[RMDB]
RNA sequence: GGGAACGACUCGAGUAGAGUCGAAAAGGGGCUGACAGGAAUCGACAGUAGAGUGUAUCAUGUCAGUAAGCAUGCCGGGGAAUGGUGGUUUACCCCGUUAUCAAAUUAUUACCGACCAAUAAUUGGCUUAGCUCGUUGGGCUUCGGCCCAACGAGAAUCAUGCUAAUUUCUUCGGAAAUUAGCAUGAAAAAGAAACAACAACAACAAC
Reactivity to DMS in 0.01 (KOAc 150mM, MgCl2 10mM, bicine 150mM(pH8.5), 24C), signal-to-noise 1, nucleotides 027 to 156: g050g000g070g060c020u010g000a070c060a110g000g010a120a100u000c010g010a030c010a100g000u000a160g000a110g000u010g000u000a110u000c040a090u000g000u000c040a070g010u010a080a140g000c030a060u000g050c060c000g000g000g040g020a070a110u000g040g000u010g010g020u000u000u000a120c000c000c000c000g020u000u040a050u040c250a040a070a110u000u000a080u000u000a050c030c000g000a050c020c060a050a130u010a010a150u000u000g000g010c060u010u000a140g040c020u000c000g050u040u000g030g020g020c010u000u000c290g050g070c000c000c000a020a000c000g010a000g020a020a070
Reactivity to 2A3 in 0.01 (KOAc 150mM, MgCl2 10mM, bicine 150mM(pH8.5), 24C), signal-to-noise 4, nucleotides 027 to 156: g010g010g030g030c000u010g010a020c030a020g020g070a060a100u120c090g060a040c050a040g120u180a070g110a050g040u080g010u020a060u100c040a050u060g030u020c010a010g040u060a050a020g030c030a050u120g070c010c010g010g000g000g000a020a040u050g010g030u010g020g010u010u010u100a060c000c000c000c000g030u040u020a020u040c010a010a030a050u090u070a020u050u070a050c000c050g080a090c070c040a030a080u250a080a070u090u070g050g000c040u100u070a040g060c000u000c000g000u000u010g000g000g020c020u020u030c160g080g000c000c000c000a000a000c000g000a000g000a000a000

Structure probing data (DMS and 2A3) for a 207-nucleotide construct. The DMS profile rests on 2,923 reads. DMS adducts were read by reverse transcription with MarathonRT. For 2A3, 2,753 sequencing reads were counted.